[RMDB]
RNA sequence: GGGAACGACUCGAGUAGAGUCGAAAAGUAGUUAUGCUGAAAAUCGUUGAGGUUGUAUGGAAUAGGUUAACCGUAAGACCUUAAGUUGACAAACUUUAAAAUUAAUCUCAGGUAAAUUACUUUGAGUAAAACCUUCGUCGUUUCGACGACGAAGGAACACUUGGUUCAGGUUCGCCUGAACCAAGUGAAAAGAAACAACAACAACAAC
Reactivity to 2A3 in 0.01 (KOAc 150mM, MgCl2 10mM, bicine 150mM(pH8.5), 24C), signal-to-noise 2, nucleotides 027 to 156: g010u010a000g000u110u000a070u150g030c020u030g070a000a030a050a130u170c080g010u010u040g010a000g000g020u030u020g060u110a080u060g070g080a100a150u090a100g100g070u200u110a100a030c010c000g010u040a030a030g020a010c000c000u020u030a030a030g020u070u090g070a090c040a000a030a010c030u150u090u160a020a030a100a140u080u110a110a080u030c000u000c070a010g000g040u150a170a170a000u020u040a020c000u120u140u240g020a070g020u070a060a080a000a020c000c000u000u000c000g000u000c020g030u000u000u130c120g010a010c000g000a000c010g000a010a000g000g000a000a000
Conditions: 150 mM KOAc, 10 mM MgCl2 and 150 mM bicine (pH 8.5), 24 C.
This 207-nucleotide RNA was probed chemically with 2A3.
Values cover nucleotides 27 to 156.
For 2A3 the reverse transcriptase was SuperScript II with manganese.